Conditions: 150 mM KOAc, 10 mM MgCl2 and 150 mM bicine (pH 8.5), 24 C. This 177-nucleotide RNA was probed chemically with DMS and 2A3. High DMS reactivity at an A or C suggests that its Watson-Crick edge is free. For 2A3, 2,229 sequencing reads were counted. For 2A3 the reverse transcriptase was SuperScript II with manganese. For DMS, 1,725 sequencing reads were counted.
RNA sequence: GGGAACGACUCGAGUAGAGUCGAAAAGGUUUUGGUACGCCUUAGCCGUAACCGGCGGCGGGCGAUGCGCUUGGCCCCGACGGAUGGGAGUUCAAGGUGGUCCGCCUGGUACCACGCGCAUUCGCAGCCGACCCAUAUCAUUCGUGAUAUGGGUCGGAAAAGAAACAACAACAACAAC
Reactivity to DMS in 0.01 (KOAc 150mM, MgCl2 10mM, bicine 150mM(pH8.5), 24C), signal-to-noise 2, nucleotides 027 to 126: g000g010u000u020u010u000g000g030u010a110c140g000c010c010u000u010a130g020c030c000g010u010a100a170c150c050g010g000c050g020g010c000g020g040g020c010g010a030u010g010c050g000c010u000u010g000g000c300c110c000c040g010a090c060g000g020a080u000g020g000g010a080g010u000u000c180a110a080g020g000u020g010g010u000c010c060g050c000c010u030g010g020u010a010c010c010a010c220g000c030g010c040a040u030u010c020g030c050a180g000
Reactivity to 2A3 in 0.01 (KOAc 150mM, MgCl2 10mM, bicine 150mM(pH8.5), 24C), signal-to-noise 2, nucleotides 027 to 126: g140g000u000u040u110u210g070g000u040a040c070g010c010c010u010u080a020g020c030c000g030u050a090a060c060c040g060g000c000g010g000c000g050g030g000c030g000a000u030g020c040g000c010u000u000g010g000c020c000c000c020g030a040c030g010g080a030u090g110g040g060a180g080u160u150c060a080a050g090g060u080g030g030u050c010c000g000c000c020u010g030g000u060a120c010c000a020c050g060c020g000c000a040u140u130c040g000c030a000g040